[RMDB]
RNA sequence: GGGAACGACUCGAGUAGAGUCGAAAAGACUGGCCCUUCUUGCUGGCCAAGCUGACGGACAUUUACAAGGUCCCCCUGGACGGGUACGGCCGCAUGAACGGCCGGGGCGUGUUUCGCGUGUGGGACACACCGUACGACUUUUCGAAGUCGUACGGUGAAAAGAAACAACAACAACAAC
Reactivity to 2A3 in 0.01 (KOAc 150mM, MgCl2 10mM, bicine 150mM(pH8.5), 24C), signal-to-noise 6, nucleotides 027 to 126: g060a030c030u020g010g000c000c010c000u020u030c040u030u050g040c150u270g010g000c000c000a030a050g070c060u070g040a060c050g050g000a020c030a080u140u150u160a150c130a240a100g120g010u000c020c000c000c000c010u080g070g100a060c090g090g000g000u110a030c030g000g010c000c000g000c020a070u130g030a030a010c020g000g000c000c000g000g000g010g010c100g030u070g010u020u080u070c050g000c040g010u110g030u110g010g010g000a000c020a010
Reactivity to DMS in 0.01 (KOAc 150mM, MgCl2 10mM, bicine 150mM(pH8.5), 24C), signal-to-noise 5, nucleotides 027 to 126: g010a080c040u010g000g030c000c000c070u010u010c010u030u010g000c040u040g020g000c010c010a080a170g000c040u010g010a160c100g020g000a040c030a090u010u020u060a160c280a110a090g010g010u000c020c010c020c030c030u010g000g000a130c090g000g010g010u010a080c290g010g000c010c000g000c040a070u010g000a060a050c230g000g000c000c000g000g000g020g020c030g030u000g010u010u000u010c030g010c120g000u020g000u030g000g000g010a140c120a160